An RNA of 207 nucleotides, treated with 2A3 and read out base by base.
The reactions ran in a buffer of 150 mM KOAc, 10 mM MgCl2 and 150 mM bicine (pH 8.5), at 24 C.
It was measured as part of the RMDB library OK3TST.
As a SHAPE reagent, 2A3 marks flexible, mostly unpaired nucleotides at the ribose 2'-OH.

RNA sequence: GGGAACGACUCGAGUAGAGUCGAAAAGAGCGCAGUUCUAGGCUUUUCGCCCUUAGCUCACACACACCCCUUCUGCCUGCUUGGACUUUAAUGGCUCAAGACAGCCUUGAGCUCACUGGGAAAAGAAAAUGACUGUUAAAAAUUAUCCUUGAAAUUACGCGUGAUCAGCAUUCGUGCUGAUCACGCGAAAAGAAACAACAACAACAAC
Reactivity to 2A3 in 0.01 (KOAc 150mM, MgCl2 10mM, bicine 150mM(pH8.5), 24C), signal-to-noise 1, nucleotides 027 to 156: g010a010g040c040g000c120a080g020u080u140c150u190a130g030g040c140u270u130u070u060c080g010c000c000c000u030u020a040g000c020u000c010a000c000a000c040a000c020a020c010c000c000c000u060u090c010u010g100c010c010u060g000c030u030u040g020g050a060c000u120u050u120a170a010u250g000g000c000u000c020a030a050g000a090c020a010g000c000c020u000u000g000a010g000c080u080c060a040c060u050g010g000g010a080a030a000a020g030a050a110a040a010u140g020a040c030u000g030u170u140a080a000a140a000a000u260u130a010u000c010c000u000u110g030a050a100a060u270u090a050